Structure probing data (DMS and 2A3) for a 177-nucleotide construct. 2A3 adducts were read by reverse transcription with SuperScript II with manganese. The RNA was probed in 150 mM KOAc, 10 mM MgCl2 and 150 mM bicine (pH 8.5) at 24 C. The data come from the RNA Mapping Database (RMDB), library OK2TST. For DMS, 1,037 sequencing reads were counted. The 2A3 profile rests on 664 reads. Values cover nucleotides 27 to 126.
RNA sequence: GGGAACGACUCGAGUAGAGUCGAAAAGACAAUGCCGAUUGAUGUUGACUACGAUGCACCGUUGCGGCGUCUUGCUGAUAAAAUAACUGGGUCGCUUCAAUCAUAGCGUGCGGUUUCAGGGCCGUCGUCGCUUGAAUGACUUCGGUCAUUCAAGCGAAAAAGAAACAACAACAACAAC
Reactivity to DMS in 0.01 (KOAc 150mM, MgCl2 10mM, bicine 150mM(pH8.5), 24C), signal-to-noise 1, nucleotides 027 to 126: g030a090c080a070a180u010g030c020c040g020a060u010u040g000a040u000g010u000u010g030a120c090u030a130c140g010a080u010g010c030a060c110c060g020u000u020g020c090g020g010c050g020u000c010u000u000g000c110u010g000a140u010a020a150a080a090u000a060a060c120u020g020g000g020u000c030g000c020u000u000c000a070a000u030c060a080u000a080g030c020g010u000g000c080g020g050u000u030u020c160a100g030g000g000c000c010g020u010c110g000
Reactivity to 2A3 in 0.01 (KOAc 150mM, MgCl2 10mM, bicine 150mM(pH8.5), 24C), signal-to-noise 1, nucleotides 027 to 126: g040a000c030a060a000u200g030c010c000g030a000u060u130g030a030u050g000u300u140g050a030c020u090a120c170g110a070u070g040c050a010c070c100g090u080u200g050c050g000g020c020g040u030c020u010u070g000c030u030g000a170u150a150a170a140a140u200a120a040c030u080g020g000g010u000c010g000c000u050u080c000a000a020u070c030a050u090a130g030c000g040u080g000c030g000g050u030u060u060c170a220g030g020g030c030c000g000u040c080g090